[RMDB]
About this RNA
Chemical mapping of a 207-nucleotide RNA with 2A3 and DMS.
RNA sequence: GGGAACGACUCGAGUAGAGUCGAAAAUUGAAGUGCAGGACCUUAAGCUAUCAGUGCACAAAAGUCAACAAAAUGACUGUGCUAAUAAGGAGAACAUUGUCAAUUCUUUUACUGAUAAACAACAAACACCAGAAAAAUUACCUAUACCAAUGAUAGACACGUACCCAUAGUUCGCUAUGGGUACGUGAAAAGAAACAACAACAACAAC
Reactivity to 2A3 in 0.01 (KOAc 150mM, MgCl2 10mM, bicine 150mM(pH8.5), 24C), signal-to-noise 4, nucleotides 027 to 156: u030u020g040a040a000g010u030g010c050a030g000g070a100c040c000u070u080a070a010g000c010u020a030u080c020a020g030u020g060c060a000c010a030a140a050a030g020u010c010a010a080c080a150a150a040a050u080g000a000c000u000g020u000g030c000u050a140a110u070a120a100g030g000a020g010a020a000c030a100u070u110g100u120c020a050a090u030u090c030u040u140u060u060a040c000u010g040a010u100a160a130a010c050a040a000c020a060a150a020c080a020c040c080a010g150a050a050a000a000a020u120u100a030c020c010u090a090u060a130c040c020a090a030u130g040a060u070a060g010a010
Reactivity to DMS in 0.01 (KOAc 150mM, MgCl2 10mM, bicine 150mM(pH8.5), 24C), signal-to-noise 1, nucleotides 027 to 156: u010u020g000a170a130g040u000g050c050a120g000g080a080c000c080u020u000a120a200g030c140u000a000u030c090a080g190u010g030c000a030c070a080a090a120a070g030u000c000a010a110c020a100a130a220a290u000g000a010c010u000g000u010g010c060u000a050a210u010a020a050g010g010a100g000a070a020c000a130u000u000g000u010c070a010a090u000u000c040u000u020u020u000a170c020u040g000a100u000a020a120a090c000a070a180c130a100a180a120c090a080c030c010a080g000a030a020a110a150a040u000u000a040c070c000u000a070u010a050c090c070a030a130u000g000a130u000a130g010a150
For 2A3, 1,691 sequencing reads were counted. Reactivities are rounded to 0.1 and cut off at 0 and 3. The RNA was probed in 150 mM KOAc, 10 mM MgCl2 and 150 mM bicine (pH 8.5) at 24 C. For 2A3 the reverse transcriptase was SuperScript II with manganese.